RNA sequence: GGGAACGACUCGAGUAGAGUCGAAAAACCUUUGUGCUAACGACAUGCUCCUACCGCUAUGCGCUACCCAUUGGGUAGCGAACUACAUAGCGAUGGAGCAACAGCGUUAGCACUCUGGUAAAAUGCUGUCAGGUACCUUCGGGUACCUGACAGCAAACAGUACCUAUAAGUUCGCUUAUAGGUACUGAAAAGAAACAACAACAACAAC
Reactivity to 2A3 in 0.01 (KOAc 150mM, MgCl2 10mM, bicine 150mM(pH8.5), 24C), signal-to-noise 2, nucleotides 027 to 156: a000c000c000u010u000u010g000u010g000c000u000a000a000c000g200a060c050a110u080g010c010u000c000c010u020a090c010c020g000c000u000a000u000g010c010g050c000u000a000c000c010c080a300u190u300g010g020g000u010a000g000c000g010a000a010c010u090a020c020a000u000a000g020c020g000a000u040g000g000a010g030c000a000a000c010a010g010c000g000u000u000a000g000c000a000c000u000c000u000g000g000u040a060a060a000a050u110g000c010u000g000u000c000a010g000g030u010a020c010c000u050u200c260g070g000g000u000a000c010c000u000g000a020c010a000g010c010a000a000a000
Reactivity to DMS in 0.01 (KOAc 150mM, MgCl2 10mM, bicine 150mM(pH8.5), 24C), signal-to-noise 1, nucleotides 027 to 156: a040c000c010u000u000u000g040u000g040c000u010a010a000c010g030a100c070a300u000g030c040u020c010c000u000a060c020c000g050c020u000a010u000g010c020g050c010u010a030c010c000c040a300u000u000g060g060g030u010a000g000c070g010a000a060c030u020a180c030a020u000a030g000c010g000a000u000g000g020a060g020c000a000a000c110a110g000c000g000u000u000a020g030c000a000c010u000c020u000g020g030u000a060a060a100a080u010g070c000u030g010u000c000a010g060g010u000a000c000c020u000u020c300g060g010g010u000a000c020c000u000g010a000c010a000g000c020a000a000a090